[RMDB]
RNA sequence: GGGAACGACUCGAGUAGAGUCGAAAAGAAAGAAGAAAAACCGUGUGAACUAUGAUGGCGUUACAAACCUCGACGAAAAGAAACACUUGAUACUACCGAAAGCGAGAGCUGCUGCAUACGGAAGAAACCAUAUAGUACCAUUCGUGGUACUAUAUGGAAAAGAAACAACAACAACAAC
Reactivity to 2A3 in 0.01 (KOAc 150mM, MgCl2 10mM, bicine 150mM(pH8.5), 24C), signal-to-noise 9, nucleotides 027 to 126: g100a010a050a000g140a020a040g070a010a080a010a000a010c020c020g020u020g010u020g040a090a080c050u040a140u150g050a070u070g040g000c030g030u110u080a050c070a060a080a030c010c010u030c020g070a070c030g050a070a040a040a070g110a020a090a000c070a010c040u040u050g040a030u070a160c020u050a070c030c050g070a110a050a000g040c020g020a030g000a010g040c050u050g000c010u020g000c010a020u040a070c020g030g030a040a010g040a050a060a000
Reactivity to DMS in 0.01 (KOAc 150mM, MgCl2 10mM, bicine 150mM(pH8.5), 24C), signal-to-noise 9, nucleotides 027 to 126: g010a100a080a070g000a120a100g000a080a070a070a090a070c030c040g000u000g010u010g000a060a100c100u020a040u030g000a060u020g020g000c030g000u020u030a090c150a060a080a110c100c010u000c050g010a090c080g020a060a040a040a060g010a100a060a070c080a070c100u010u010g000a080u030a050c060u010a070c090c040g000a050a060a060g010c030g020a100g000a070g010c030u010g020c030u000g000c020a030u010a040c040g000g000a090a050g000a070a070a110